[RMDB]
RNA sequence: GGGAACGACUCGAGUAGAGUCGAAAAUCAGUUCACUUCGGUGAACUGAAAAAUGGCAGCUAUGAGCUAAAGUGUCAUAGCAAAAGAUCGAAAGAUCAAUAAAAACCAUGGACUUCGGUCCAUGGAAGCAUUAAACGAGGUUCGCCUCGUUUAAUGCAAAAGAAACAACAACAACAAC
Reactivity to 2A3 in 0.01 (KOAc 150mM, MgCl2 10mM, bicine 150mM(pH8.5), 24C), signal-to-noise 2, nucleotides 027 to 126: u020c000a000g000u000u020c000a000c000u010u090c170g140g000u020g010a000a000c000u010g000a000a000a000a000a000u120g030g010c010a010g000c000u010a010u000g020a000g000c030u160a240a100a060g200u190g010u050c000a000u000a000g000c000a050a050a000a020g000a000u020c020g040a040a020a000g000a010u000c010a040a020u080a030a050a010a000a020c000c000a000u000g000g000a000c000u010u060c290g090g000u050c010c010a000u000g000g000a000a000
Reactivity to DMS in 0.01 (KOAc 150mM, MgCl2 10mM, bicine 150mM(pH8.5), 24C), signal-to-noise 2, nucleotides 027 to 126: u000c000a020g000u000u000c000a000c010u000u020c140g000g050u000g040a000a000c000u010g020a000a030a090a130a100u040g000g010c000a300g000c000u000a000u000g000a000g010c000u010a040a080a220g010u000g030u010c000a010u000a000g000c000a060a120a150a110g000a070u000c010g010a110a110a220g040a060u010c000a110a150u000a010a070a110a120a100c000c000a010u010g020g000a060c000u000u060c200g040g010u010c000c000a000u000g010g000a010a040
Structure probing data (2A3 and DMS) for a 177-nucleotide construct. Source: RMDB library M2PK50, as collected in RNAgym. 2A3 is a SHAPE reagent: it acylates the 2'-hydroxyl of flexible nucleotides of all four kinds. The RNA was probed in 150 mM KOAc, 10 mM MgCl2 and 150 mM bicine (pH 8.5) at 24 C.